Chemical mapping of a 207-nucleotide RNA with DMS and 2A3. For 2A3 the reverse transcriptase was SuperScript II with manganese. The data come from the RNA Mapping Database (RMDB), library M2RFPK.
RNA sequence: GGGAACGACUCGAGUAGAGUCGAAAAUCCGACGAGCUGAACGCUUUCGAAGGAAAGCUUGACCAGCUAAUCUUCUGCAACGCCAUUACGAGGACUGCCCUUAGAGGCUCAUAGCGAUAGGUCACCCAAAACUAUUUGAGGUUCGCCUCAAAUAGAACUGGAUAAUAAGGUUCGCCUUAUUAUCCAGAAAAGAAACAACAACAACAAC
Reactivity to DMS in 0.01 (KOAc 150mM, MgCl2 10mM, bicine 150mM(pH8.5), 24C), signal-to-noise 3, nucleotides 027 to 156: u000c010c040g010a080c050g010a060g030c010u000g010a100a150c190g010c010u000u000u000c020g010a280a150g000g000a060a040a050g010c010u000u010g010a110c090c010a120g040c010u020a080a130u000c020u000u000c020u010g010c040a090a090c070g000c040c020a130u000u000a090c100g020a120g010g020a060c050u000g010c060c000c010u000u000a060g010a230g020g020c020u000c050a060u000a060g000c030g000a120u010a080g020g010u000c020a080c000c000c000a040a070a090a180c000u000a000u000u000u000g020a020g020g020u000u000c300g000c030c010u000c000a000a020a020u010a010g000a060a180
Reactivity to 2A3 in 0.01 (KOAc 150mM, MgCl2 10mM, bicine 150mM(pH8.5), 24C), signal-to-noise 6, nucleotides 027 to 156: u020c010c000g040a070c060g010a030g010c020u040g050a130a030c050g010c020u050u060u050c030g080a110a070g130g030a040a050a010g010c000u080u090g060a050c030c020a010g010c010u020a090a090u060c060u110u030c050u070g030c030a070a050c060g020c030c030a080u120u140a070c070g020a040g020g040a040c060u090g030c020c000c010u050u110a100g020a100g120g000c010u000c030a070u100a020g020c020g060a040u070a100g030g010u030c030a070c000c010c000a010a100a030a060c000u000a000u000u000u010g000a000g000g050u060u100c200g080c040c000u000c000a000a000a000u000a000g000a030a040